[RMDB]
RNA sequence: GGGAACGACUCGAGUAGAGUCGAAAAUUAUGAAGAAGUCUUUGACCUUUUUCUUGGCAGUGGUCGCGGCACUAUAGCGCCUAAUCCCAUUUUUGUGGAUCAGUAUCUGUGUGGUGCGGAUGGAACAGUCUUAAGGUGCUUUCGAGCACCUUAAGACAAAAGAAACAACAACAACAAC
Reactivity to DMS in 0.01 (KOAc 150mM, MgCl2 10mM, bicine 150mM(pH8.5), 24C), signal-to-noise 1, nucleotides 027 to 126: u000u000a080u010g000a040a040g020a080a040g020u010c060u010u000u020g010a070c060c010u000u000u000u000u000c010u000u000g010g020c080a060g000u000g000g030u000c010g030c060g000g070c040a070c050u000a050u000a080g040c060g010c070c000u000a070a070u000c010c000c010a160u000u000u000u010u010g030u000g030g000a040u010c080a050g010u010a090u000c040u000g070u000g020u000g010g000u040g020c030g000g030a070u020g000g010a100a070c190a100